[RMDB]
RNA sequence: GGGAACGACUCGAGUAGAGUCGAAAAAAGUCCAUAUGCCCACCUUCGCUGUAUCGGGUGGAUGCUUAUACAUGCUAUGGAUGCCUACAUUUGAAAUAAUGUAGAUGCCUAAUACUCUCUCUCAGGGAGAGAGUUUAGAUGCCUCCAAAGGUAAUGCCAUUUAUCCCCUGUUCGCAGGGGAUAAAUGAAAAGAAACAACAACAACAAC
Reactivity to DMS in 0.01 (KOAc 150mM, MgCl2 10mM, bicine 150mM(pH8.5), 24C), signal-to-noise 1, nucleotides 027 to 156: a040a000g010u010c010c020a130u000a100u000g010c020c000c010a050c020c020u000u040c090g030c110u000g000u000a100u000c070g010g020g000u000g010g000a140u000g040c050u010u010a090u010a060c000a090u000g000c020u000a300u010g000g010a020u000g030c080c000u000a020c000a000u000u010u000g010a180a110a140u000a050a010u000g010u000a010g010a110u010g020c070c000u000a010a030u010a080c000u000c000u000c000u000c000u000c150a300g030g060g000a040g000a020g010a000g000u000u000u030a010g000a150u000g010c070c040u000c000c050a070a060a150g030g000u000a020a060u010g010c000
Reactivity to 2A3 in 0.01 (KOAc 150mM, MgCl2 10mM, bicine 150mM(pH8.5), 24C), signal-to-noise 2, nucleotides 027 to 156: a000a000g070u030c050c010a010u050a020u230g060c030c000c000a000c000c010u100u180c100g080c160u170g100u180a120u170c010g000g000g000u000g010g000a020u130g000c000u060u080a080u040a160c110a040u250g060c010u060a020u060g000g010a010u020g020c000c010u000a000c000a000u010u010u080g130a120a120a050u300a040a030u040g030u020a060g010a110u060g000c000c010u000a020a020u090a100c000u020c000u000c000u000c020u020c170a160g080g260g000a010g000a000g000a010g020u000u000u000a040g000a020u080g000c000c010u050c040c040a000a120a000g000g020u010a150a030u100g070c000